[RMDB]
RNA sequence: GGGAACGACUCGAGUAGAGUCGAAAAAUGGAAAAGGGGCAAGUGGUUGAAACAGGAACUGUUAAAGAGGUGUUUAGUCAUCCUAAAACGACGAUUGCUCAAAAUUUUGUGUCUACAGUUAUACAGACAUACCGCAGUUGUUCGCAACUGCGGUAUGAAAAGAAACAACAACAACAAC
Reactivity to 2A3 in 0.01 (KOAc 150mM, MgCl2 10mM, bicine 150mM(pH8.5), 24C), signal-to-noise 2, nucleotides 027 to 126: a000u070g100g010a020a030a010a080g010g010g000g000c010a040a020g050u030g080g000u080u060g030a110a100a030c040a000g110g040a090a080c010u050g060u130u120a080a100a010g120a090g050g000u010g150u040u020u080a080g110u070c030a050u120c080c000u010a110a110a000a000c010g050a000c050g060a060u000u080g110c050u010c040a000a080a060a090u120u130u080u080g160u000g050u010c050u050a030c000a080g030u040u060a040u010a070c010a060g100a010
Reactivity to DMS in 0.01 (KOAc 150mM, MgCl2 10mM, bicine 150mM(pH8.5), 24C), signal-to-noise 3, nucleotides 027 to 126: a050u020g000g000a030a060a070a150g000g000g000g000c090a010a090g040u000g000g020u020u000g000a090a130a090c080a080g010g020a050a080c050u000g000u020u010a020a100a070g000a190g010g000u010g060u000u010u030a130g010u000c050a070u070c030c010u000a020a050a120a080c080g020a040c090g010a070u020u030g040c050u010c030a070a030a090a090u010u000u020u020g030u010g020u010c040u000a080c110a060g010u020u030a070u010a140c140a020g000a270
Background: The record gives the reactivity of an RNA of 177 nucleotides to 2A3 and DMS. It was measured as part of the RMDB library OK1LIB. For DMS the reverse transcriptase was MarathonRT. For 2A3, 1,128 sequencing reads were counted.